The record gives the reactivity of an RNA of 207 nucleotides to 2A3 and DMS.
The reactions ran in a buffer of 150 mM KOAc, 10 mM MgCl2 and 150 mM bicine (pH 8.5), at 24 C.
For DMS the reverse transcriptase was MarathonRT.

RNA sequence: GGGAACGACUCGAGUAGAGUCGAAAAAGCACGACCGCGUUACGACGCGGUCCUGCAGCAAUGAGUAGAAGCGGUCAAAUUUGGUGUCGAGUUCCAACAAACCAAAUUCGGGCAUUGCUCACUGCAAAAAACUCUCUUUAGUUCGCUAAAGAGAGAAGUUAUUCAACUAGUUCGCUAGUUGAAUAACAAAAGAAACAACAACAACAAC
Reactivity to 2A3 in 0.01 (KOAc 150mM, MgCl2 10mM, bicine 150mM(pH8.5), 24C), signal-to-noise 8, nucleotides 027 to 156: a000g020c010a010c010g000a000c000c000g010c030g020u010u070a120c300g030a010c010g050c000g000g000u000c000c000u000g010c010a020g000c000a010a040u030g000a010g000u030a030g020a150a010g040c080g040g060u040c020a010a020a020u010u000u000g020g000u030g080u130c120g110a090g100u170u130c070c010a040a030c030a060a150a020c010c000a000a000a010u020u030c040g030g010g000c020a020u030u050g000c000u000c000a000c010u000g000c000a000a020a020a050a070a110c000u000c000u000c000u000u010u000a010g010u030u060c200g030c110u000a000a000a000g000a000g000a000g000a010a000
Reactivity to DMS in 0.01 (KOAc 150mM, MgCl2 10mM, bicine 150mM(pH8.5), 24C), signal-to-noise 3, nucleotides 027 to 156: a100g010c030a010c070g010a020c000c000g010c000g030u000u010a140c230g040a110c010g040c010g010g010u000c010c010u000g070c020a210g010c010a020a010u000g010a030g000u000a040g020a100a140g010c040g030g050u000c000a070a010a050u000u000u000g000g030u000g000u000c050g010a180g000u000u010c130c070a090a090c070a080a090a070c000c000a000a010a030u000u010c050g010g010g010c020a160u000u000g010c010u010c000a020c020u000g030c020a000a050a060a060a060a090c000u000c000u000c010u000u000u000a010g010u000u000c300g030c020u000a010a030a010g000a030g000a000g020a000a030